[RMDB]
RNA sequence: GGGAACGACUCGAGUAGAGUCGAAAAGAAAGAAAGAAAGGCCUCAAUGAUGAAUUAGAGGAAGUUAUUGUCGAGAAAACGAGACAGACUUUAGCUUCCGUUGCAUCAGGACCAAAACACACCCAAAAACCUUAUUCCGAUUCGUCGGAAUAAGGUUAAAAGAAACAACAACAACAAC
Reactivity to DMS in 0.01 (KOAc 150mM, MgCl2 10mM, bicine 150mM(pH8.5), 24C), signal-to-noise 6, nucleotides 027 to 126: g010a110a100a080g000a120a080a120g000a110a120a130g000g010c050c050u010c160a080a090u010g000a000u010g000a070a080u030u020a100g010a090g010g000a010a000g010u000u000a000u000u000g010u010c010g010a160g020a100a060a100a130c240g000a100g010a100c150a160g000a020c010u000u010u000a020g010c000u000u010c010c010g010u000u010g010c010a000u000c020a040g000g000a080c010c010a030a060a080a090c140a060c100a120c000c020c010a040a060a080
Reactivity to 2A3 in 0.01 (KOAc 150mM, MgCl2 10mM, bicine 150mM(pH8.5), 24C), signal-to-noise 5, nucleotides 027 to 126: g090a000a060a000g070a020a080a000g050a060a080a030g020g000c010c050u100c070a070a160u050g010a000u010g000a000a210u130u110a150g040a020g030g000a000a000g000u020u000a010u000u000g010u000c050g000a010g110a130a200a120a100c120g050a100g100a150c060a030g000a000c000u000u000u010a010g000c000u000u010c000c020g020u030u220g050c010a010u000c010a010g040g020a050c000c020a010a000a060a000c120a000c030a120c020c000c020a100a030a020
Conditions: 150 mM KOAc, 10 mM MgCl2 and 150 mM bicine (pH 8.5), 24 C.
Chemical mapping of a 177-nucleotide RNA with DMS and 2A3.
Source: RMDB libraries RFM100 and RFMREP, as collected in RNAgym.